Structure probing data (2A3 and DMS) for a 177-nucleotide construct.
It was measured as part of the RMDB library OK1LIB.
Values cover nucleotides 27 to 126.
For DMS the reverse transcriptase was MarathonRT.
[RMDB]
RNA sequence: GGGAACGACUCGAGUAGAGUCGAAAACAAACCGCGCAAAAUUGUCAAAUGCGGUCAACCGUCAGAAUUUCGGGCGGAAAUACGACAUUAUACAGAAAGCCGGCCGCAAUGUCGUAUAGCGCGGAAAGAUGAGCAUACUCUUCGGAGUAUGCUCAUCAAAAGAAACAACAACAACAAC
Reactivity to 2A3 in 0.01 (KOAc 150mM, MgCl2 10mM, bicine 150mM(pH8.5), 24C), signal-to-noise 1, nucleotides 027 to 126: c000a010a040a020c000c000g010c000g000c000a000a040a000a170u010u090g000u070c030a020a100a000u060g000c000g000g000u000c000a000a060c000c000g020u000c000a000g030a030a190u050u040u080c000g060g000g000c000g010g080a000a110a000u060a050c000g000a000c010a010u000u040a080u100a040c030a000g130a050a070a000g040c000c080g000g000c000c000g010c000a010a000u010g000u000c020g000u000a080u020a000g000c000g000c000g030g040a000a000a030
Reactivity to DMS in 0.01 (KOAc 150mM, MgCl2 10mM, bicine 150mM(pH8.5), 24C), signal-to-noise 1, nucleotides 027 to 126: c080a090a070a110c000c000g020c000g040c020a060a020a070a060u000u030g020u000c080a080a040a120u040g000c110g000g000u000c040a050a170c000c010g000u000c000a020g000a070a150u000u000u000c050g000g000g000c080g000g000a040a080a000u000a000c050g020a000c040a040u000u000a130u120a180c130a080g010a040a130a040g000c030c080g070g080c080c000g000c000a000a060u000g030u000c020g000u010a020u060a030g000c000g010c000g030g000a000a090a060